[RMDB]
RNA sequence: GGGAACGACUCGAGUAGAGUCGAAAACGCUAUUCCUCGAUGUGACGCUUGAGACAUGGCGACAAUACAGGGUGAGAGAAGACUUAUCUGAGGUCGUUACGCGAGCAGAGCAAAUCAUCUACGACCACUUCCAUACCGAUUUCGAUCGGUAUGGAAGAAAAGAAACAACAACAACAAC
Reactivity to 2A3 in 0.01 (KOAc 150mM, MgCl2 10mM, bicine 150mM(pH8.5), 24C), signal-to-noise 3, nucleotides 027 to 126: c060g030c080u120a110u050u060c030c030u060c040g060a060u050g040u030g080a030c060g000c030u030u080g040a020g010a060c030a050u080g010g000c010g040a030c040a030a130u150a090c050a070g080g040g000u080g020a040g000a000g020a150a070g070a050c040u050u040a030u050c030u050g050a020g070g050u020c010g030u040u060a040c110g010c040g050a030g070c030a010g000a020g020c020a020a050a090u050c020a020u000c040u040a030c040g050a050c000c040a040
Reactivity to DMS in 0.01 (KOAc 150mM, MgCl2 10mM, bicine 150mM(pH8.5), 24C), signal-to-noise 3, nucleotides 027 to 126: c090g050c120u000a200u000u010c020c010u000c130g020a070u020g020u000g020a200c170g000c070u000u000g010a110g000a110c090a050u020g000g000c020g010a030c080a040a040u020a150c130a100g020g040g060u000g030a100g020a120g000a090a120g000a080c030u000u000a100u010c050u010g010a110g030g000u000c020g030u010u000a020c090g000c020g010a050g030c060a090g000a110g020c060a040a070a080u010c100a030u000c070u000a060c070g000a070c080c050a200

The data come from the RNA Mapping Database (RMDB), library OK2TST. This 177-nucleotide RNA was probed chemically with 2A3 and DMS. In probing experiments dimethyl sulfate is read out at A N1 and C N3, which are open when not base-paired. Conditions: 150 mM KOAc, 10 mM MgCl2 and 150 mM bicine (pH 8.5), 24 C. For 2A3, 3,903 sequencing reads were counted.